RNA sequence: GGGAACGACUCGAGUAGAGUCGAAAAGACUUUAACUGAUAACGGUACUGAUUUUGAAGAGUUAGUACCCUCUUCAAAUCGAUUUUUUUUGGAGCUAGCAGGAUACAUACUGAAUGGGGUCAUAAACCCUGAUAAAUGGGUUCGCCCAUUUAUCAGGAAAAGAAACAACAACAACAAC
Reactivity to 2A3 in 0.01 (KOAc 150mM, MgCl2 10mM, bicine 150mM(pH8.5), 24C), signal-to-noise 8, nucleotides 027 to 126: g030a010c030u100u140u110a200a030c030u060g090a120u110a200a050c070g030g010u050a050c040u070g030a050u060u040u100u220g090a070a030g010a000g030u070u070a040g040u110a080c010c000c000u000c000u010u010c000a020a020a020u020c030g070a050u030u000u020u040u040u030u090u160g070g000a030g010c020u040a010g020c040a010g000g020a040u040a120c050a030u070a050c040u020g020a050a080u110g000g000g000g000u020c010a020u100a050a100a120c010
Reactivity to DMS in 0.01 (KOAc 150mM, MgCl2 10mM, bicine 150mM(pH8.5), 24C), signal-to-noise 4, nucleotides 027 to 126: g000a040c030u010u000u010a080a120c080u020g010a110u020a050a110c190g010g010u010a070c050u020g000a010u000u000u000u010g010a060a040g010a000g000u030u020a090g010u040a110c150c170c030u020c040u000u010c020a000a010a050u020c090g010a020u000u000u000u060u010u010u020u030g010g010a040g010c190u020a090g010c020a040g000g000a060u010a070c120a090u050a040c110u010g000a060a070u020g000g000g000g000u000c040a120u040a100a100a070c110

The record gives the reactivity of an RNA of 177 nucleotides to 2A3 and DMS. Values cover nucleotides 27 to 126. For DMS, 6,559 sequencing reads were counted. It was measured as part of the RMDB library OK1LIB. 2A3 is a SHAPE reagent: it acylates the 2'-hydroxyl of flexible nucleotides of all four kinds. 2A3 adducts were read by reverse transcription with SuperScript II with manganese.